[RMDB]
RNA sequence: GGGAACGACUCGAGUAGAGUCGAAAAGUUGCAUACAUAACUUUUUUUAUUUGUAUUCGAACUAGUCCAAGCCGAUUCUCAAAAUCAUAUAAAAUCAUUUACACCUUGGUCAUGGUAGCUAAGAAUACCUUGGUUAGAGCUUCGGCUCUAACCAAGGAAAAGAAACAACAACAACAAC
Reactivity to 2A3 in 0.01 (KOAc 150mM, MgCl2 10mM, bicine 150mM(pH8.5), 24C), signal-to-noise 1, nucleotides 027 to 126: g000u010u010g010c060a050u040a020c000a080u190a150a120c050u000u010u060u200u040u080u000a150u060u000u010g000u000a000u030u000c000g050a010a040c040u000a000g000u000c000c000a030a050g000c000c000g080a040u140u000c030u000c010a000a120a000a000u140c010a000u130a060u050a110a110a060a170u090c000a000u030u150u050a070c130a080c000c000u000u050g000g030u020c000a010u110g110g000u060a050g120c040u060a110a000g020a210a000u030a010